[RMDB]
RNA sequence: GGGAACGACUCGAGUAGAGUCGAAAAAGAAAUAGCGAUUCUCGAAGGAGUUGAGUCCUUCGAGGAUUGCUAAGCAAAGAUGCAGAACUAUCAAUGAACGACUUUGCUCAUCUUUGUAUAGAAAAAACGUGGUAAAGUAGUUCGCUACUUUACCACGAAAAGAAACAACAACAACAAC
Reactivity to 2A3 in 0.01 (KOAc 150mM, MgCl2 10mM, bicine 150mM(pH8.5), 24C), signal-to-noise 2, nucleotides 027 to 126: a000g090a000a080a030u040a020g000c000g000a000u010u000c000u010c000g010a000a010g030g010a010g030u270u160g170a030g180u000c010c000u010u020c010g000a000g000g000a000u010u000g000c000u010a020a000g000c010a000a010a000g010a010u060g000c070a010g040a090a050c050u060a100u170c020a090a180u190g110a150a040c080g070a050c070u160u080u050g000c000u000c010a030u000c020u000u040u000g050u020a210u120a100g200a040a090a010a010a010a000
Reactivity to DMS in 0.01 (KOAc 150mM, MgCl2 10mM, bicine 150mM(pH8.5), 24C), signal-to-noise 1, nucleotides 027 to 126: a060g010a100a090a150u000a010g020c000g000a000u000u000c000u010c000g010a010a000g000g020a040g000u030u000g010a240g010u000c000c010u000u000c000g010a010g010g010a010u000u000g000c010u010a020a070g030c020a010a030a010g010a020u000g020c110a040g010a050a100c100u010a050u000c020a100a180u050g020a090a160c210g020a030c040u020u000u010g020c010u010c020a020u000c010u000u000u000g000u020a070u000a080g020a010a040a050a030a090a080